[RMDB]
RNA sequence: GGGAACGACUCGAGUAGAGUCGAAAAGAUAUGGACGUAAGUGCUGCUACACUAUUCGGAAACGAACGAAUGUAGAACUACAGCCUUACGUCCUAAGUCAAAAGCCGUACCGUUCGCGGUACGGCAACGUAGGCAUACUGUUCGCAGUAUGCCUACGAAAAGAAACAACAACAACAAC
Reactivity to 2A3 in 0.01 (KOAc 150mM, MgCl2 10mM, bicine 150mM(pH8.5), 24C), signal-to-noise 4, nucleotides 027 to 126: g010a020u050a020u090g000g000a000c010g000u010a000a000g040u100g300c010u030g060c000u040a000c020a020c030u150a120u090u040c000g060g000a050a060a030c030g020a040a010c060g070a260a180u060g010u020a010g050a130a060c210u250a090c290a010g000c000c000u010u000a000c000g000u000c000c000u000a010a000g000u010c010a000a060a080a050g000c000c000g000u000a010c010c000g020u020u080c300g000c000g110g000u000a000c000g000g000c000a000a000
Reactivity to DMS in 0.01 (KOAc 150mM, MgCl2 10mM, bicine 150mM(pH8.5), 24C), signal-to-noise 4, nucleotides 027 to 126: g010a040u000a300u010g000g010a010c010g000u000a000a010g020u000g030c010u000g000c010u010a030c010a030c090u000a300u010u010c000g010g000a080a080a150c010g020a020a020c130g010a040a040u000g000u000a000g010a070a040c120u010a300c000a000g010c010c010u000u000a000c000g000u000c000c000u010a000a040g000u000c020a080a090a130a110g000c010c000g000u000a010c000c000g020u020u010c240g010c010g000g010u000a000c010g000g010c020a000a000